[RMDB]
RNA sequence: GGGAACGACUCGAGUAGAGUCGAAAAGGCCGGAAGUGGUUAUUUCUUCAAUGCGACAACUAAUUAUAAAAGCACCGAAGAGGGCUUUCGGCGAUAUUGACAGGCAGCUGCAUUUGUGCCCGGAAAGUCACUGUAAAUCUUUCGAGAUUUACAGUGAAAAAGAAACAACAACAACAAC
Reactivity to DMS in 0.01 (KOAc 150mM, MgCl2 10mM, bicine 150mM(pH8.5), 24C), signal-to-noise 6, nucleotides 027 to 126: g020g010c010c000g020g020a010a000g030u010g010g020u020u060a090u020u010u000c000u010u000c000a110a150u010g000c000g010a140c210a130a170c180u040a100a100u040u030a150u020a070a090a130a290g010c010a040c220c200g000a010a010g000a040g000g000g000c000u000u000u000c000g010g010c020g000a030u010a010u000u020g000a080c070a060g020g010c100a060g000c040u010g000c050a070u010u010u010g010u000g000c020c010c020g010g010a070a070a070g000
Reactivity to 2A3 in 0.01 (KOAc 150mM, MgCl2 10mM, bicine 150mM(pH8.5), 24C), signal-to-noise 8, nucleotides 027 to 126: g080g000c000c020g000g030a020a010g020u030g080g120u210u150a130u130u170u010c010u000u000c000a050a120u070g010c010g070a030c070a120a020c080u190a140a140u300u090a130u120a170a140a020a020g000c000a010c030c060g000a010a000g010a000g020g030g000c000u000u000u010c010g010g010c010g000a010u030a040u070u100g050a040c020a030g010g110c010a060g030c050u050g000c030a060u040u070u120g040u060g030c000c010c000g040g070a120a080a010g040